The data come from the RNA Mapping Database (RMDB), library M2RFPK. This 207-nucleotide RNA was probed chemically with DMS and 2A3. The RNA was probed in 150 mM KOAc, 10 mM MgCl2 and 150 mM bicine (pH 8.5) at 24 C. For 2A3 the reverse transcriptase was SuperScript II with manganese. Reactivities are given for positions 27 through 156.
[RMDB]
RNA sequence: GGGAACGACUCGAGUAGAGUCGAAAAGAACACGUCUCGGGACGACGCUAAACUCGCCCUGGUCGGGAUGGGUUUCACGACCCCUCGGGUUUCCUAGUUCCUAAAACUAGGUGGUGGAGUCAUAUAAAAAACUUCUACACGUUCGCGUGUAGAAGAACCUAAAUACCUAGUUCGCUAGGUAUUUAGGAAAAGAAACAACAACAACAAC
Reactivity to DMS in 0.01 (KOAc 150mM, MgCl2 10mM, bicine 150mM(pH8.5), 24C), signal-to-noise 3, nucleotides 027 to 156: g010a130a070c030a130c030g010u000c010u010c030g030g020g030a040c040g000a020c000g030c010u010a080a080a150c200u000c000g040c010c000c000u010g040g020u010c080g020g000g010a050u010g020g000g010u000u000u010c090a170c040g000a130c000c000c000c010u000c090g010g030g000u010u010u000c020c020u000a030g000u000u010c050c050u000a050a040a040a030c020u000a030g030g020u010g010g020u000g010g000a170g000u000c050a100u000a180u020a000a040a070a060a120a080c000u000u000c000u000a000c000a020c010g010u000u010c300g010c000g040u000g030u000a000g010a000a000g010a060a080
Reactivity to 2A3 in 0.01 (KOAc 150mM, MgCl2 10mM, bicine 150mM(pH8.5), 24C), signal-to-noise 5, nucleotides 027 to 156: g060a090a020c090a010c060g000u010c000u010c010g010g040g020a100c300g010a010c030g010c240u000a010a000a000c010u010c010g040c020c010c010u040g030g020u030c020g020g030g050a090u110g040g050g020u030u090u130c090a030c040g020a000c010c010c000c010u020c030g040g000g000u010u020u030c000c000u000a000g000u000u060c020c040u120a030a020a010a020c010u010a030g020g000u000g010g020u040g010g040a070g040u100c070a040u140a010u300a170a050a010a000a020a040c000u000u000c000u010a000c000a000c000g020u040u040c190g020c000g080u000g000u000a000g010a000a000g000a000a000